[RMDB]
RNA sequence: GGGAACGACUCGAGUAGAGUCGAAAAGAUAUGGAUGUGUCACGACAACAGCCCAAGGGUCGGAAACGACCCUGGGACAUGUCGGACACAUCCUAAGUCAAAAUCAUGCUCGUUCGCGAGCAUGAAAGCUAUUUGCUUAGUUCGCUAAGCAAAUAGCAAAAGAAACAACAACAACAAC
Reactivity to 2A3 in 0.01 (KOAc 150mM, MgCl2 10mM, bicine 150mM(pH8.5), 24C), signal-to-noise 7, nucleotides 027 to 126: g000a010u010a000u070g010g000a000u010g070u000g000u030c070a180c300g020a010c010a300a040c110a300g020c020c020c030a130a300g010g000g000u000c010g000g000a010a010a000c000g030a000c000c000c000u000g000g000g010a010c050a190u300g000u000c000g000g000a000c000a000c000a000u000c000c000u000a010a000g000u000c010a010a000a000a300u040c000a010u000g000c000u000c010g050u080u060c300g040c010g150a010g000c000a000u000g000a000a000a010
Reactivity to DMS in 0.01 (KOAc 150mM, MgCl2 10mM, bicine 150mM(pH8.5), 24C), signal-to-noise 3, nucleotides 027 to 126: g000a010u000a040u020g000g000a010u000g010u010g000u000c000a170c000g000a010c000a150a050c230a140g010c000c000c000a040a130g010g000g000u010c000g000g000a010a020a030c000g010a020c000c010c010u000g000g000g010a000c020a130u010g020u000c000g010g000a000c000a000c010a000u000c000c000u000a000a040g000u000c010a130a080a160a140u000c010a000u000g010c000u000c000g010u010u030c300g020c010g000a010g010c000a010u000g000a020a060a100